[RMDB]
RNA sequence: GGGAACGACUCGAGUAGAGUCGAAAAGCAGUUGCAAAUUGAUUACAAGGGCAAUGAGAUAAUGACGGCGGCGGCGUCCCAGGGCCUUACACGUAAGGGAGUGUAUGCCGUCAGGUAUAAGGUCAACCUUUUCCAGUAACUUCGGUUACUGGAAAAGAAAAGAAACAACAACAACAAC
Reactivity to 2A3 in 0.01 (KOAc 150mM, MgCl2 10mM, bicine 150mM(pH8.5), 24C), signal-to-noise 2, nucleotides 027 to 126: g000c020a010g040u050u020g040c060a030a130a150u140u090g040a030u200u190a100c030a130a060g070g000g080c010a010a040u070g020a050g050a110u120a130a120u110g030a020c040g010g010c000g060g070c060g050g000c030g010u000c020c000c010a010g050g040g050c000c030u020u000a030c070a000c020g070u130a070a080g050g040g010a070g020u100g020u070a100u160g000c000c050g050u010c000a000g000g000u060a030u030a130a070g110g010u050c020a000a070c010
Reactivity to DMS in 0.01 (KOAc 150mM, MgCl2 10mM, bicine 150mM(pH8.5), 24C), signal-to-noise 3, nucleotides 027 to 126: g020c030a130g000u010u000g000c060a060a130a160u010u000g010a150u010u000a130c140a060a080g000g000g020c060a050a050u000g020a140g000a080u010a060a060u000g010a030c010g020g030c040g020g000c110g000g000c020g000u000c000c010c030a180g010g010g000c020c030u030u010a020c040a040c060g020u000a070a100g000g000g000a150g020u020g010u010a090u010g000c010c000g000u000c040a010g010g000u010a070u010a030a060g030g020u000c060a060a110c200

The record gives the reactivity of an RNA of 177 nucleotides to 2A3 and DMS.
DMS adducts were read by reverse transcription with MarathonRT.
For DMS, 2,652 sequencing reads were counted.
Source: RMDB library OK2TRN, as collected in RNAgym.